Chemical mapping of a 207-nucleotide RNA with 2A3. Conditions: 150 mM KOAc, 10 mM MgCl2 and 150 mM bicine (pH 8.5), 24 C. 2A3 adducts were read by reverse transcription with SuperScript II with manganese. 2A3 is a SHAPE reagent: it acylates the 2'-hydroxyl of flexible nucleotides of all four kinds.
[RMDB]
RNA sequence: GGGAACGACUCGAGUAGAGUCGAAAAGCUGACUAUGGCCUGCAACAAGGUCCUCAGCAAAGAAUACUGCAAAGCUUCAGGGUCAAAGAAGCAUAGGCGUGGUCACCGACACCAAGAAGAAGAAAGUGAAACAGAAGAGGAUGAAGAGGAUACACCAACUCAUGAGCUCAUUCGUGAGCUCAUGAGUAAAAGAAACAACAACAACAAC
Reactivity to 2A3 in 0.01 (KOAc 150mM, MgCl2 10mM, bicine 150mM(pH8.5), 24C), signal-to-noise 1, nucleotides 027 to 156: g000c040u000g040a020c040u170a130u230g060g000c000c000u000g130c000a110a090c040a240a080g060g000u070c000c040u000c000a020g030c020a000a070a000g070a070a090u080a120c040u070g030c060a050a120a150g000c030u050u030c030a040g110g020g010u110c010a140a000a000g040a040a000g030c000a010u090a030g080g060c020g030u040g020g000u050c020a020c040c020g040a020c020a000c050c010a000a000g020a020a000g000a000a020g000a000a130a020g070u080g010a050a050a010c080a010g040a030a000g010a010g020g000a000u030g040a030a000g030a020g020g000a010u010a050c070a000c020c060a080